[RMDB]
RNA sequence: GGGAACGACUCGAGUAGAGUCGAAAACGGUGGUAGGCAGAGUGUAUUUGUAAAUUCAGUAACCCACCAGCACGUGUAAACGCACGCAAAAGCCCUUUAUGGCAAUGUGUCUCGGCUGGUUAUGGUACACAAUGGUACUGUUCGCAGUACCAUUGUGAAAAGAAACAACAACAACAAC
Reactivity to DMS in 0.01 (KOAc 150mM, MgCl2 10mM, bicine 150mM(pH8.5), 24C), signal-to-noise 4, nucleotides 027 to 126: c100g020g020u000g020g020u010a040g000g000c050a020g010a100g030u010g000u000a030u010u000u010g020u000a070a050a110u000u000c080a090g010u000a090a080c040c000c200a060c010c010a020g020c020a100c040g040u000g020u010a010a020a050c110g030c170a040c030g000c050a030a030a110a210g010c010c000c270u000u000u010a070u020g000g000c030a040a270u000g010u010g000u000c030u000c030g020g010c000u000g010g000u000u010a040u010g000g000u000a190
Reactivity to 2A3 in 0.01 (KOAc 150mM, MgCl2 10mM, bicine 150mM(pH8.5), 24C), signal-to-noise 2, nucleotides 027 to 126: c030g020g030u050g020g040u030a040g010g000c020a000g030a030g050u080g020u020a100u060u050u020g110u100a100a140a140u080u040c010a000g050u030a040a100c000c010c010a010c010c000a000g000c040a020c060g000u030g000u020a010a060a010c060g050c100a020c000g020c000a010a040a020a050g020c000c000c020u050u150u100a240u220g000g000c010a040a070u010g020u000g020u000c000u010c020g010g010c000u010g000g030u020u100a140u180g030g020u040a040
Notes:
Chemical mapping of a 177-nucleotide RNA with DMS and 2A3. DMS adducts were read by reverse transcription with MarathonRT. Values cover nucleotides 27 to 126. The DMS profile rests on 3,105 reads.